[RMDB]
RNA sequence: GGGAACGACUCGAGUAGAGUCGAAAAAAAGAUAUGGACGUAUGGGAGGUAGUAGGGUCGAAGAACAUAUUUCGGAAACGAAAUAUGGGAGACCCUAAUACCGAAGAACAUACGUCCUAAGUCAAAAGUAGCAUAUACACUUCGGUGUAUAUGCUACAAAAGAAACAACAACAACAAC
Reactivity to 2A3 in 0.01 (KOAc 150mM, MgCl2 10mM, bicine 150mM(pH8.5), 24C), signal-to-noise 1, nucleotides 027 to 126: a000a000a000g080a020u080a060u110g000g000a000c020g020u020a000u020g080g040g040a170g050g030u020a010g070u000a010g040g000g020u030c060g130a300a060g020a050a000c010a010u010a020u020u000u000c010g010g000a060a010a010c010g000a000a000a000u010a000u010g000g000g000a030g000a000c000c000c000u000a010a000u010a010c010c000g000a050a000g000a010a020c000a000u010a000c000g010u010c000c000u000a010a000g040u000c010a000a030a130a130
Reactivity to DMS in 0.01 (KOAc 150mM, MgCl2 10mM, bicine 150mM(pH8.5), 24C), signal-to-noise 2, nucleotides 027 to 126: a070a120a070g000a030u000a300u010g000g010a000c000g000u000a000u000g000g000g000a180g010g000u000a000g010u010a020g010g010g010u010c000g040a080a110g000a150a100c000a020u000a000u000u000u000c000g040g000a110a060a110c010g010a000a010a000u000a000u000g010g000g000a070g000a010c000c000c000u000a000a010u000a020c000c000g000a080a160g000a110a200c000a020u000a030c000g020u000c010c000u000a000a050g010u010c020a090a090a120a150